[RMDB]
This 207-nucleotide RNA was probed chemically with 2A3. Values cover nucleotides 27 to 156. The 2A3 profile rests on 475 reads. It was measured as part of the RMDB library OK3TST.
RNA sequence: GGGAACGACUCGAGUAGAGUCGAAAAGGGGAUACGGUUCAUGGUACCGGUACUGAUGUUGAAGCUAUCGAUCACAUGGUGCUGGUUCUCGUCCUGCAUCACGAUGUAGUUUUUCAGAUAGGGAACCUUGAGCAAGAUCACGAAGCGGCCCGUCACGAGGUUACAUAGUCUUCGGACUAUGUAACCUAAAAGAAACAACAACAACAAC
Reactivity to 2A3 in 0.01 (KOAc 150mM, MgCl2 10mM, bicine 150mM(pH8.5), 24C), signal-to-noise 1, nucleotides 027 to 156: g150g030g010g000a030u070a220c010g100g030u010u030c030a000u010g040g030u010a000c000c060g020g030u000a010c010u000g150a100u070g070u250u190g070a050a030g010c050u050a040u180c080g180a020u010c070a050c050a170u100g010g000u000g010c030u050g000g000u120u050c130u130c260g190u120c010c010u010g010c000a000u010c000a000c150g000a050u000g010u060a010g000u000u130u080u080u030c010a010g030a070u120a180g000g010g000a030a030c000c000u000u070g000a000g000c000a070a100g070a280u050c030a010c000g010a040a010g050c000g050g000c010c000c000g020u020c010a010c150g120